[RMDB]
RNA sequence: GGGAACGACUCGAGUAGAGUCGAAAAUGAGAUAGCUAAAUCACCUCGGUAUGAUUAGGGUGAGACCUAGGAACCGUAGGGGUAUUCUCAAGGGAAGCUUUUGCAGUGACGCCCAUGUAAGUGGGAUAAGAACCAACCCACUUCGGUGGGUUGGUAAGAAUCCCUCUAGAUUCGUCUAGAGGGAUUCAAAAGAAACAACAACAACAAC
Reactivity to DMS in 0.01 (KOAc 150mM, MgCl2 10mM, bicine 150mM(pH8.5), 24C), signal-to-noise 1, nucleotides 027 to 156: u000g050a090g010a120u000a050g030c060u000a040a110a100u010c020a060c000c010u000c000g000g000u010a050u000g010a300u000u000a020g030g010g010u010g000a270g010a170c010c010u010a060g010g010a130a100c040c060g000u000a070g050g010g010g030u000a110u000u000c020u040c040a090a110g030g000g010a100a110g010c010u000u010u000u000g040c030a090g010u000g010a090c040g020c020c000c000a030u000g010u010a030a200g010u010g000g000g000a040u000a030a170g010a090a140c000c000a040a050c000c010c000a010c000u010u000c210g030g040u010g000g010g050u010u000g000g000u000a000a040
Reactivity to 2A3 in 0.01 (KOAc 150mM, MgCl2 10mM, bicine 150mM(pH8.5), 24C), signal-to-noise 2, nucleotides 027 to 156: u090g010a040g050a040u090a030g030c100u060a040a170a060u110c040a050c000c000u020c020g010g020u300a180u230g040a070u020u050a000g010g000g000u080g110a070g030a030c000c010u010a010g030g060a050a030c000c010g040u070a010g000g000g000g020u040a070u080u060c020u000c010a060a010g000g000g060a080a050g030c040u090u090u180u150g030c060a030g050u030g100a020c100g030c000c020c000a000u040g090u090a120a180g040u020g000g000g000a020u060a090a030g070a020a010c000c000a010a010c010c000c010a020c000u020u020c080g040g000u000g000g010g010u000u000g000g000u000a010a000
Source: RMDB library M2RFPK, as collected in RNAgym.
Structure probing data (DMS and 2A3) for a 207-nucleotide construct.
For 2A3, 985 sequencing reads were counted.
Conditions: 150 mM KOAc, 10 mM MgCl2 and 150 mM bicine (pH 8.5), 24 C.